[RMDB]
RNA sequence: GGGAACGACUCGAGUAGAGUCGAAAAGCCGGACCGCGCUUCCGGUACAUCGCCUCCCCGCCCGCGCAGGAUCCCUGCGGGCACCCUCCGUCCUCCGGCGAUGUAUCCCGUGACUGGGCGAGCAGACUUACCAGGUACGUUUCGACGUACCUGGUAAAAAAGAAACAACAACAACAAC
Reactivity to 2A3 in 0.01 (KOAc 150mM, MgCl2 10mM, bicine 150mM(pH8.5), 24C), signal-to-noise 3, nucleotides 027 to 126: g030c000c000g010g010a040c070c060g090c020g000c130u050u030c000c010g000g000u000a000c010a000u020c030g010c010c000u050c020c020c000c030g020c000c000c000g050c020g040c070a040g010g110a160u170c050c010c000u010g010c030g000g010g000c000a040c030c010c000u060c020c010g070u030c000c030u100c010c060g000g000c000g000a000u010g020u010a040u050c000c020c020g010u040g040a060c060u020g000g020g000c010g010a050g040c020a000g040a050c020
Reactivity to DMS in 0.01 (KOAc 150mM, MgCl2 10mM, bicine 150mM(pH8.5), 24C), signal-to-noise 2, nucleotides 027 to 126: g000c000c000g070g000a080c090c090g020c150g020c020u020u000c010c010g000g000u000a020c050a060u000c020g010c020c010u010c020c030c010c080g000c020c020c020g000c000g020c100a090g000g000a200u000c060c020c000u020g060c000g000g040g010c030a100c090c010c020u000c050c070g000u000c010c030u020c090c030g000g010c040g010a030u000g010u030a070u010c000c040c030g040u020g010a070c060u030g000g000g000c010g040a040g000c140a020g000a140c190

Chemical mapping of a 177-nucleotide RNA with 2A3 and DMS. The RNA was probed in 150 mM KOAc, 10 mM MgCl2 and 150 mM bicine (pH 8.5) at 24 C. The data come from the RNA Mapping Database (RMDB), library RFM100. The 2A3 profile rests on 2,274 reads.